Chemical mapping of a 177-nucleotide RNA with 2A3 and DMS. DMS adducts were read by reverse transcription with MarathonRT. For DMS, 902 sequencing reads were counted. The reactions ran in a buffer of 150 mM KOAc, 10 mM MgCl2 and 150 mM bicine (pH 8.5), at 24 C. In probing experiments dimethyl sulfate is read out at A N1 and C N3, which are open when not base-paired. For 2A3 the reverse transcriptase was SuperScript II with manganese.

RNA sequence: GGGAACGACUCGAGUAGAGUCGAAAACGGUUCAGUGGUGGUUUGUGUAUCCCACACUGUUACUUCCGGUAACUUGGAGUUUGUAGCGACGUAAGUUUCGUCCUAAAAGGACUCAUCAGGUAGCCUAGACUCCAGAUAUCUUCGGAUAUCUGGAGUCAAAAGAAACAACAACAACAAC
Reactivity to 2A3 in 0.01 (KOAc 150mM, MgCl2 10mM, bicine 150mM(pH8.5), 24C), signal-to-noise 1, nucleotides 027 to 126: c020g000g010u040u040c010a010g000u040g080g090u030g050g290u140u140u210g280u030g090u110a060u010c000c000c000a010c000a000c000u010g020u010u030a050c040u120u020c020c010g050g020u050a060a000c000u040u030g030g000a000g020u040u050u080g100u030a040g000c060g080a010c020g030u060a010a130g030u080u070u170c030g000u010c000c000u060a090a120a080a170g030g010a000c010u000c000a110u010c000a000g000g010u000a010g030c000c000u000a010
Reactivity to DMS in 0.01 (KOAc 150mM, MgCl2 10mM, bicine 150mM(pH8.5), 24C), signal-to-noise 1, nucleotides 027 to 126: c240g040g160u010u000c030a010g030u000g010g060u010g030g000u000u000u000g030u000g000u010a130u010c150c010c020a070c020a020c010u000g010u000u000a020c120u000u000c070c020g000g050u030a130a040c030u000u020g020g000a060g030u000u000u010g030u000a000g020c220g000a030c030g040u000a070a180g030u010u000u010c010g020u000c010c020u000a010a040a050a180g010g010a030c030u000c010a060u010c000a060g000g000u010a130g010c040c020u030a120